[RMDB]
RNA sequence: GGGAACGACUCGAGUAGAGUCGAAAACUGAAGCAGAUGCAGAAUUACCGUUUAUUAAAACAAUCAUAGGUACUUUUGGGGCUUUUAACGAAAACUCAUUCGCUUUAGUUUCGCUAUUACUUGAUGUACUCUAUACCACUUUCGAGUGGUAUAGAGUAAAAGAAACAACAACAACAAC
Reactivity to 2A3 in 0.01 (KOAc 150mM, MgCl2 10mM, bicine 150mM(pH8.5), 24C), signal-to-noise 9, nucleotides 027 to 126: c000u010g000a010a000g000c030a030g000a040u030g030c030a000g030a120a100u090u040a070c040c020g040u050u070u060a160u040u160a110a120a060a060c080a050a040u140c060a070u130a130g050g030u120a160c050u060u150u120u150g080g000g040g020c040u120u070u040u120a060a050c040g070a040a030a030a030c010u010c010a020u090u050c020g010c010u010u010u010a000g000u000u010u000c010g000c010u020a060u260u030a050c010u010u020g010a020u110g060u020
Reactivity to DMS in 0.01 (KOAc 150mM, MgCl2 10mM, bicine 150mM(pH8.5), 24C), signal-to-noise 3, nucleotides 027 to 126: c000u010g000a020a020g000c010a030g010a030u000g030c120a020g000a070a070u020u000a040c120c100g020u010u010u000a110u020u010a060a080a080a080c130a060a070u010c060a100u020a140g020g010u010a010c150u020u020u010u010g020g000g010g000c090u020u000u030u000a100a030c170g010a040a050a070a090c030u030c010a070u010u000c040g000c010u010u000u000a000g000u000u000u000c000g010c030u000a030u020u010a010c010u000u000g010a010u000g030u000